[RMDB]
RNA sequence: GGGAACGACUCGAGUAGAGUCGAAAAUCAUAAUGCAGUCGUAAAAUCGUAUCCUAUGAUUCCAGGAAUAGAUUUAGCUGGAACAAUUGUUGAAUCCGAAGCACCAGGCUUUGAAAAAGGAGAACAACAGCUCCCAUAGUUUCGACUAUGGGAGCUGAAAAGAAACAACAACAACAAC
Reactivity to DMS in 0.01 (KOAc 150mM, MgCl2 10mM, bicine 150mM(pH8.5), 24C), signal-to-noise 1, nucleotides 027 to 126: u000c050a060u050a100a070u060g000c200a090g000u000c050g000u050a050a130a030a170u030c100g000u000a270u000c000c000u000a010u000g000a100u000u000c080c000a000g000g000a030a010u000a050g000a120u030u000u050a160g120c000u000g070g000a000a000c060a120a110u040u000g000u010u000g000a000a170u000c030c030g000a190a030g000c050a070c150c140a180g070g000c000u000u000u220g020a000a000a150a090a140g010g000a100g000a070a130c050a020a040
Reactivity to 2A3 in 0.01 (KOAc 150mM, MgCl2 10mM, bicine 150mM(pH8.5), 24C), signal-to-noise 1, nucleotides 027 to 126: u040c000a020u060a130a040u300g030c000a030g000u060c050g090u090a040a030a000a100u160c000g000u000a100u000c000c000u100a140u300g060a210u030u000c010c000a000g000g130a040a080u180a040g150a140u180u150u090a010g050c000u000g000g040a010a010c080a030a290u050u090g050u010u070g060a010a000u000c000c010g040a020a000g000c000a000c020c070a060g090g080c070u070u000u110g300a000a130a000a000a000g130g000a070g020a070a000c030a000a000